[RMDB]
RNA sequence: GGGAACGACUCGAGUAGAGUCGAAAAUCAGAGCACCUGUCUGUAGUCGUAACCAAUACCCCUCUCCUCUAAGGUCACAAUAUGGAUGAGGACCUAGAAGUACUUGCAGCUUUCAUUUCACCCUGAACGCUAAGAUAAAGUUCGCUUUAUCUUAGCGAAAAGAAACAACAACAACAAC
Reactivity to 2A3 in 0.01 (KOAc 150mM, MgCl2 10mM, bicine 150mM(pH8.5), 24C), signal-to-noise 8, nucleotides 027 to 126: u090c010a010g020a010g030c030a010c060c020u040g060u040c030u060g100u090a020g020u040c030g040u040a050a030c030c000a090a070u220a290c020c010c000c000u020c010u000c020c000u010c020u040a070a040g020g000u020c010a010c010a100a090u140a070u260g130g010a060u100g050a110g050g020a010c000c010u020a030g020a080a010g020u030a040c020u030u050g010c010a010g000c000u030u060u030c020a050u040u070u070c050a070c020c000c000u010g030a080a020
Reactivity to DMS in 0.01 (KOAc 150mM, MgCl2 10mM, bicine 150mM(pH8.5), 24C), signal-to-noise 9, nucleotides 027 to 126: u010c080a080g010a110g010c050a070c040c030u000g010u000c040u000g030u000a050g010u000c040g010u000a070a140c050c040a090a110u010a260c070c020c010c010u000c030u000c020c020u000c040u010a060a060g010g010u000c020a050c080a080a100u010a120u010g010g020a100u000g010a140g010g010a020c020c010u010a050g000a060a080g000u000a050c080u000u000g010c050a050g010c040u000u010u000c040a080u000u010u010c080a110c020c010c020u010g010a090a170